[RMDB]
RNA sequence: GGGAACGACUCGAGUAGAGUCGAAAAGAUAUGGAACUUCUACCCACCUUCGAAGCACUUUGAUCUCGGAAACGAGGGAGUGCUAAGAAGAGGAAGUUCCUAAGUCAAAGGAUCGUUCGCGAUCCAAGGUGAAGUUAAUCUUCGGAUUAACUUCACCAAAAGAAACAACAACAACAAC
Reactivity to DMS in 0.01 (KOAc 150mM, MgCl2 10mM, bicine 150mM(pH8.5), 24C), signal-to-noise 2, nucleotides 027 to 126: g000a130u010a190u010g000g020a020a010c000u000u000c010u010a190c030c040c010a300c070c010u050u000c000g010a300a080g000c010a000c010u020u000u050g010a070u020c000u000c010g000g000a050a020a180c000g000a010g000g010g010a000g010u000g000c010u020a020a300g000a020a010g010a090g030g000a010a010g000u000u000c000c000u000a020a060g000u000c140a030a170a070g030g010a000u000c000g010u000u010c220g030c010g000a000u000c000c020a010a070
Reactivity to 2A3 in 0.01 (KOAc 150mM, MgCl2 10mM, bicine 150mM(pH8.5), 24C), signal-to-noise 2, nucleotides 027 to 126: g090a060u280a160u280g000g000a000a030c000u010u110c000u190a300c040c010c020a040c000c010u020u020c010g000a050a010g000c000a010c000u190u300u210g170a210u180c000u000c000g000g090a150a110a080c010g000a000g000g050g010a000g000u000g030c000u000a010a000g010a000a040g000a000g000g000a000a000g000u000u000c000c000u020a050a010g170u190c140a170a090a080g020g000a000u020c020g010u110u140c280g010c010g150a010u000c020c020a020a030

The record gives the reactivity of an RNA of 177 nucleotides to DMS and 2A3. The DMS profile rests on 1,103 reads. The reactions ran in a buffer of 150 mM KOAc, 10 mM MgCl2 and 150 mM bicine (pH 8.5), at 24 C. In probing experiments dimethyl sulfate is read out at A N1 and C N3, which are open when not base-paired. Values cover nucleotides 27 to 126.